The data come from the RNA Mapping Database (RMDB), library OK2TRN. An RNA of 177 nucleotides, treated with DMS and 2A3 and read out base by base. The DMS profile rests on 1,719 reads. Values are in units of 0.01, from 0 to 300, in steps of 10.
RNA sequence: GGGAACGACUCGAGUAGAGUCGAAAACGGGUGCGACGAACAACGCCCAGGGAGGCGGAGUGUCCUCCGUGCUGACCACCACCGCCAACUGCAACAUACAAUACCCCAUCCAGACGCUGGCGCAGCACUAGUAUCCGAGGUUCGCCUCGGAUACUAGAAAAGAAACAACAACAACAAC
Reactivity to DMS in 0.01 (KOAc 150mM, MgCl2 10mM, bicine 150mM(pH8.5), 24C), signal-to-noise 3, nucleotides 027 to 126: c050g010g000g020u000g010c090g010a070c080g000a070a110c090a060a130c090g040c020c010c030a210g020g000g010a100g010g030c020g000g010a220g000u020g020u000c030c020u000c050c040g000u000g000c070u000g010a100c060c000a050c030c030a060c080c030g020c020c020a120a100c050u000g020c030a080a080c100a080u010a070c080a070a060u000a170c040c000c010c020a040u010c040c060a070g000a040c090g010c050u000g000g010c090g040c060a030g000c100a120
Reactivity to 2A3 in 0.01 (KOAc 150mM, MgCl2 10mM, bicine 150mM(pH8.5), 24C), signal-to-noise 2, nucleotides 027 to 126: c020g020g000g080u130g010c160g000a000c030g080a130a030c040a080a040c060g050c010c010c020a070g170g080g020a150g000g030c010g020g030a040g050u090g020u060c000c010u000c020c020g000u040g010c030u030g050a050c010c020a030c000c040a070c030c030g010c000c000a070a020c050u070g030c020a060a020c010a200u280a040c020a090a100u090a170c010c000c000c000a030u090c030c000a030g070a070c030g000c100u040g000g000c010g020c040a010g020c010a030
The RNA was probed in 150 mM KOAc, 10 mM MgCl2 and 150 mM bicine (pH 8.5) at 24 C.